[RMDB]
RNA sequence: GGGAACGACUCGAGUAGAGUCGAAAAGAUAUGGACAAGGUCACAUCAGCGGUAAUAUGAACUACGCUGCUGUCUCGGAAACGAGACAAACAGCGCAUAUUACCGCUGAUUAAGCUUGUCCUAAGUCCACUAUAAAUAGGUUCGCCUAUUUAUAGUGAAAAGAAACAACAACAACAAC
Reactivity to 2A3 in 0.01 (KOAc 150mM, MgCl2 10mM, bicine 150mM(pH8.5), 24C), signal-to-noise 5, nucleotides 027 to 126: g040a020u110a060u170g010g000a000c010a020a020g210g300u200c130a040c010a080u020c000a000g010c000g000g010u000a000a000u010a000u040g030a120a130c150u170a070c300g000c010u010g000c020u010g000u010c000u000c000g020g030a080a110a080c020g000a000g010a000c010a000a030a000c000a010g010c010g000c020a010u010a000u000u010a000c000c000g000c000u000g000a000u000u000a000a010g010c000u000u000g000u010c000c000u000a020a010g010u000c020
Reactivity to DMS in 0.01 (KOAc 150mM, MgCl2 10mM, bicine 150mM(pH8.5), 24C), signal-to-noise 9, nucleotides 027 to 126: g010a090u000a300u010g010g000a010c000a010a010g010g000u000c080a150c300a040u000c000a010g020c000g010g000u000a010a000u000a010u000g010a120a110c230u020a300c030g010c000u000g020c120u000g010u010c000u000c000g010g000a130a080a250c010g010a010g000a010c000a000a050a120c000a000g000c000g000c010a000u000a000u000u000a000c000c000g010c000u000g000a000u000u000a120a160g000c010u000u000g000u000c000c000u000a020a080g010u000c030